[RMDB]
Chemical mapping of a 207-nucleotide RNA with DMS and 2A3. 2A3 adducts were read by reverse transcription with SuperScript II with manganese. DMS adducts were read by reverse transcription with MarathonRT.
RNA sequence: GGGAACGACUCGAGUAGAGUCGAAAAUAGCGAAGUAGGAUUUUAUGCGUCAAGUGUUCACAGGCUGGUGAGUCGCCGUGAAACGAAAAGCAGAAAGCGUGCUGCUUACGAUAUAAUUUCCGCACCCAUAAGAAGUCUCUGUUCGCAGAGACUUCAAUACUCUUCACAAGUUCGCUUGUGAAGAGUAAAAAGAAACAACAACAACAAC
Reactivity to DMS in 0.01 (KOAc 150mM, MgCl2 10mM, bicine 150mM(pH8.5), 24C), signal-to-noise 1, nucleotides 027 to 156: u010a100g010c060g000a070a150g010u010a090g020g020a050u000u000u000u010a030u020g010c000g070u020c090a050a250g010u010g010u000u000c020a020c010a090g020g030c020u000g000g000u020g020a110g020u000c020g050c020c010g000u000g020a030a040a080c010g010a300a060a010a050g040c000a050g010a070a030a130g060c140g020u010g020c000u000g010c010u000u000a060c010g020a070u020a030u010a040a060u000u010u010c000c010g020c070a160c030c010c000a090u020a140a200g010a030a030g000u000c010u010c000u020g020u000u000c280g060c030a040g000a030g030a020c000u000u000c000a010a190
Reactivity to 2A3 in 0.01 (KOAc 150mM, MgCl2 10mM, bicine 150mM(pH8.5), 24C), signal-to-noise 3, nucleotides 027 to 156: u130a020g070c060g050a070a010g060u140a080g020g020a010u000u000u040u030a000u020g010c000g000u010c070a070a040g010u070g060u300u010c010a000c040a060g000g030c030u120g000g120u080g060a100g110u140c040g020c020c020g000u000g020a000a020a010c010g010a090a000a000a000g000c010a000g080a050a130a020g150c100g050u100g040c000u010g000c000u020u020a000c010g000a000u010a000u000a110a010u020u010u000c000c000g000c030a050c000c010c000a030u050a100a060g010a010a000g000u010c000u000c000u000g050u070u050c150g000c090a000g000a000g000a000c000u000u000c010a000a000